An RNA of 177 nucleotides, treated with 2A3 and DMS and read out base by base. As a SHAPE reagent, 2A3 marks flexible, mostly unpaired nucleotides at the ribose 2'-OH. Values cover nucleotides 27 to 126. DMS adducts were read by reverse transcription with MarathonRT. The RNA was probed in 150 mM KOAc, 10 mM MgCl2 and 150 mM bicine (pH 8.5) at 24 C. Reactivities are rounded to 0.1 and cut off at 0 and 3.
RNA sequence: GGGAACGACUCGAGUAGAGUCGAAAAGAAUGCCCAUUCGUGGGCAUUCCACCGCAGCGAAGCCGAAAGGCAUUUUAUGCGUACCCUGGCGAAAGCCUAAAAAAGCUCCACUUUUCGAAGUGGAGAACAUGUUUCCGUAAUUCGUUACGGAAACAUGAAAAGAAACAACAACAACAAC
Reactivity to 2A3 in 0.01 (KOAc 150mM, MgCl2 10mM, bicine 150mM(pH8.5), 24C), signal-to-noise 3, nucleotides 027 to 126: g000a000a000u000g000c000c000c020a000u030u080c260g070u020g010g000g000c000a000u000u000c000c000a050c050c000g010c000a000g030c010g040a030a010g010c000c000g060a100a020a010g000g010c010a000u020u020u010u020a040u000g000c000g000u050a100c000c010c030u030g020g000c000g040a130a020a020g010c030c000u100a110a100a030a000a010a010g040c010u000c010c010a010c000u070u050u060u150c250g070a010a000g000u000g000g010a000g000a000a010
Reactivity to DMS in 0.01 (KOAc 150mM, MgCl2 10mM, bicine 150mM(pH8.5), 24C), signal-to-noise 4, nucleotides 027 to 126: g000a010a010u000g010c000c000c000a040u000u000c210g030u000g000g010g010c000a000u000u000c010c080a100c210c010g010c000a020g010c240g000a040a040g020c010c000g000a070a110a170g010g000c000a050u000u000u000u010a180u010g000c020g000u010a180c020c000c090u000g000g020c000g010a110a070a150g010c000c010u000a000a020a040a070a070a100g000c000u000c000c000a000c010u000u000u000u010c140g010a010a010g010u000g010g010a000g010a040a080